An RNA of 207 nucleotides, treated with 2A3 and read out base by base.
High 2A3 reactivity points to a flexible backbone, as in loops and unpaired stretches.
The data come from the RNA Mapping Database (RMDB), library OK3TST.
The reactions ran in a buffer of 150 mM KOAc, 10 mM MgCl2 and 150 mM bicine (pH 8.5), at 24 C.
RNA sequence: GGGAACGACUCGAGUAGAGUCGAAAAGUAUUUUUACUGUGCAACUUUUGUCUCUGGGUGGGGAAUACCAUAGCAACCAGAAUGUAGUGCACGCAGCCAGUGCACAGAGCAAGGCGUAUAAUGGCUGGACCUUGGCUUAUAGAGCACAUGAAGGAGAUGAGUAAUAGUGCUUCGGCACUAUUACUCAAAAAGAAACAACAACAACAAC
Reactivity to 2A3 in 0.01 (KOAc 150mM, MgCl2 10mM, bicine 150mM(pH8.5), 24C), signal-to-noise 1, nucleotides 027 to 156: g000u020a200u100u160u160u150u140a060c100u070g030u050g070c100a160a050c030u150u140u140u090g040u030c050u000c020u130g050g020g040u070g020g030g070g080a050a070u070a200c000c020a000u020a010g030c090a060a000c010c010a070g070a220a060u090g010u100a060g060u000g000c020a000c030g040c000a020g040c000c000a000g010u010g000c030a010c030a000g030a010g000c040a020a070g100g000c030g020u090a000u080a130a140u120g030g000c030u000g000g000a030c030c000u020u040g000g000c000u000u070a020u000a160g120a090g000c000a000c000a020u150g000a020a000g220g030a000g050a050